This 177-nucleotide RNA was probed chemically with DMS and 2A3.
Reactivities are given for positions 27 through 126.
For DMS, 1,574 sequencing reads were counted.
Conditions: 150 mM KOAc, 10 mM MgCl2 and 150 mM bicine (pH 8.5), 24 C.

RNA sequence: GGGAACGACUCGAGUAGAGUCGAAAAGAAGCUUUUGAGAAUAUCAGUUCUUUAGAUCCGUCGUUGCCGUUAGACCAGCAAUCUAGGGCUAGAAUAGAGAACCUGGCUGAAUCCAUGAACCAUAUGCCGUGAGGGGUAAGUUCGCUUACCCCUCACGAAAAGAAACAACAACAACAAC
Reactivity to DMS in 0.01 (KOAc 150mM, MgCl2 10mM, bicine 150mM(pH8.5), 24C), signal-to-noise 2, nucleotides 027 to 126: g010a060a060g050c040u010u000u020u060g010a180g000a090a080u010a000u000c010a030g000u000u050c000u000u000u020a100g010a050u040c020c020g010u020c050g020u010u000g000c000c080g090u010u030a040g000a090c120c040a100g010c030a120a080u000c010u000a080g040g040g020c000u080a080g000a080a040u020a110g040a030g020a080a230c160c010u000g000g030c010u000g000a080a030u000c080c020a090u000g010a090a160c080c130a070u040a100u000g000c100
Reactivity to 2A3 in 0.01 (KOAc 150mM, MgCl2 10mM, bicine 150mM(pH8.5), 24C), signal-to-noise 3, nucleotides 027 to 126: g070a040a030g080c050u100u190u210u160g120a090g040a100a100u190a040u260c020a080g010u060u020c000u050u130u060a010g020a130u000c000c020g000u070c030g020u030u020g130c040c000g040u000u030a050g040a250c040c000a020g030c000a010a070u020c010u040a050g000g030g000c030u110a060g040a210a120u040a070g060a000g000a030a050c000c000u020g000g000c000u020g080a000a010u020c020c000a120u090g020a000a050c000c000a080u050a040u290g070c020